[RMDB]
RNA sequence: GGGAACGACUCGAGUAGAGUCGAAAAAGAAAUAGCGAUAAUCGUAAGAGAAAUGUCCUUCACAUAGCGCUACGGACAGAACUAUUAGUAGCGCAAUAGCUAUUGAAGGACAUUACCUGCCAAAAAAGAUGAUAUGUAGGUUCGCCUACAUAUCAUCAAAAGAAACAACAACAACAAC
Reactivity to DMS in 0.01 (KOAc 150mM, MgCl2 10mM, bicine 150mM(pH8.5), 24C), signal-to-noise 5, nucleotides 027 to 126: a110g010a060a090a060u010a090g010c030g000a150u010a090a090u000c040g010u030a090a080g000a100g010a070a030a030u000g010u000c000c000u000u000c010a020c290a040u000a080g010c000g010c010u000a000c010g010g020a160c220a070g000a040a100c130u000a100u010u010a180g000u000a010g000c010g030c110a050a040u010a100g000c170u000a030u000u010g000a020a010g010g000a000c000a000u000u000a030c060c010u000g010c040c090a010a040a050a070a080a060
Reactivity to 2A3 in 0.01 (KOAc 150mM, MgCl2 10mM, bicine 150mM(pH8.5), 24C), signal-to-noise 5, nucleotides 027 to 126: a010g150a020a060a040u140a050g020c040g040a040u120a110a110u190c030g030u060a070a010g040a010g040a120a000a010u010g000u010c000c010u000u020c000a060c010a060u050a020g020c030g000c010u010a000c010g040g060a020c050a130g150a140a020c090u100a130u300u120a070g000u000a000g000c010g000c000a000a020u020a000g000c030u040a030u110u050g000a000a010g000g000a000c000a000u000u000a000c000c000u070g050c050c030a050a190a040a000a000a010